[RMDB]
RNA sequence: GGGAACGACUCGAGUAGAGUCGAAAAUACACACCGCCCGUCGCUACUACCGAUUGAAUGGCUCAGUGAGGCCUUCGGACUGGCACAGGGACGUUGGCAACGACGACCCAGUGCCGGAAAGUUCGUCCUAUUUAGAGCGCUUCGGCGCUCUAAAUAGAAAAGAAACAACAACAACAAC
Reactivity to 2A3 in 0.01 (KOAc 150mM, MgCl2 10mM, bicine 150mM(pH8.5), 24C), signal-to-noise 3, nucleotides 027 to 126: u090a010c050a000c000a020c030c010g030c010c010c000g030u020c010g010c040u000a040c000u030a060c060c010g070a070u080u130g120a140a130u180g020g000c010u010c030a160g110u040g150a060g050g030c000c010u020u010c030g030g030a040c010u020g010g000c010a010c040a080g020g000g000a010c000g000u000u000g030g010c040a090a020c020g020a000c000g040a050c000c000c000a010g000u000g010c000c000g000g000a020a020a000g000u020u030c000g010u040c010
Reactivity to DMS in 0.01 (KOAc 150mM, MgCl2 10mM, bicine 150mM(pH8.5), 24C), signal-to-noise 3, nucleotides 027 to 126: u020a040c170a080c110a150c060c010g000c060c000c040g010u020c010g020c030u010a030c060u010a080c000c010g020a090u050u020g010a150a070u060g000g020c060u000c040a070g000u030g020a070g040g050c000c000u030u020c010g030g000a300c020u000g000g020c020a030c000a040g000g050g030a080c000g060u000u010g000g000c270a140a140c010g000a010c000g000a090c020c000c000a100g020u000g010c020c000g000g000a060a040a130g000u000u000c010g000u010c120
The record gives the reactivity of an RNA of 177 nucleotides to 2A3 and DMS. The DMS profile rests on 3,442 reads. Values are in units of 0.01, from 0 to 300, in steps of 10. The 2A3 profile rests on 2,277 reads.